RNA sequence: GGGAACGACUCGAGUAGAGUCGAAAAGGAUCUGGCCCCACCGGGACGCCUGGACGCUCGCCUCCACGAGCCUUCGCUCGAGCUCCCGCCUGUGGCGGGCCUCCUCCUCUGCGAGGGUGAGGAUGCGUAACCUGUCGUUUUUCGAAACGACAGGUUAAAAAGAAACAACAACAACAAC
Reactivity to DMS in 0.01 (KOAc 150mM, MgCl2 10mM, bicine 150mM(pH8.5), 24C), signal-to-noise 1, nucleotides 027 to 126: g000g000a040u000c020u010g020g020c030c000c020c040a100c120c070g030g030g050a040c110g000c080c020u000g020g000a080c110g010c040u000c050g010c040c010u000c100c070a100c080g010a190g000c000c030u000u000c050g010c060u000c150g010a090g020c160u000c000c000c000g000c030c070u020g040u010g000g010c010g000g010g020c300c020u010c040c010u000c000c070u000c040u020g010c100g000a040g010g010g000u000g000a050g000g010a030u010g010c050g020
This 177-nucleotide RNA was probed chemically with DMS. For DMS, 1,073 sequencing reads were counted. It was measured as part of the RMDB library OK2TST. The reactions ran in a buffer of 150 mM KOAc, 10 mM MgCl2 and 150 mM bicine (pH 8.5), at 24 C.